[RMDB]
RNA sequence: GGGAACGACUCGAGUAGAGUCGAAAAGCAGAAGAUGAACCUGCCCAGUUGAACUCGGCUAUAGUUCGCAUGGCAGGAUUGAAUGACUUGAACACGGUUCAAGCACCGGAUUCAUCUAAUCUGCAAAACCUGGCCAACAUUGCACUUGAAGCUGCUGAUAAGUCCGUAGUUUCGACUACGGACUUAUAAAAGAAACAACAACAACAAC
Reactivity to DMS in 0.01 (KOAc 150mM, MgCl2 10mM, bicine 150mM(pH8.5), 24C), signal-to-noise 1, nucleotides 027 to 156: g050c000a070g000a120a070g000a030u000g020a050a200c020c000u000g020c010c000c080a300g000u000u000g020a020a000c000u010c070g030g000c120u020a130u010a100g010u000u000c010g010c040a180u010g020g000c000a010g020g010a090u010u010g020a070a140u010g000a070c000u010u010g010a020a030c020a160c110g080g000u020u000c040a000a020g010c020a060c010c020g030g000a300u010u000c030a040u020c060u000a060a090u000c000u020g010c020a080a060a080a210c000c010u010g020g010c020c050a080a150c110a090u000u000g000c040a110c110u000u000g000a060a200g040c000u000g010c000u010g010
Reactivity to 2A3 in 0.01 (KOAc 150mM, MgCl2 10mM, bicine 150mM(pH8.5), 24C), signal-to-noise 2, nucleotides 027 to 156: g000c000a000g000a010a000g010a000u000g000a020a030c000c000u000g000c020c000c010a030g030u160u300g040a000a010c000u040c090g120g000c130u180a160u090a200g000u000u010c000g010c040a030u030g010g030c000a010g000g000a010u010u070g020a010a090u080g080a100c000u000u000g030a030a000c300a100c300g300g000u000u010c000a000a000g000c000a000c010c070g100g040a020u000u000c010a020u020c000u020a030a140u000c000u000g000c000a000a000a000a000c000c010u020g090g020c010c000a060a090c030a110u000u230g010c000a020c050u040u000g040a060a010g020c060u020g000c000u030g020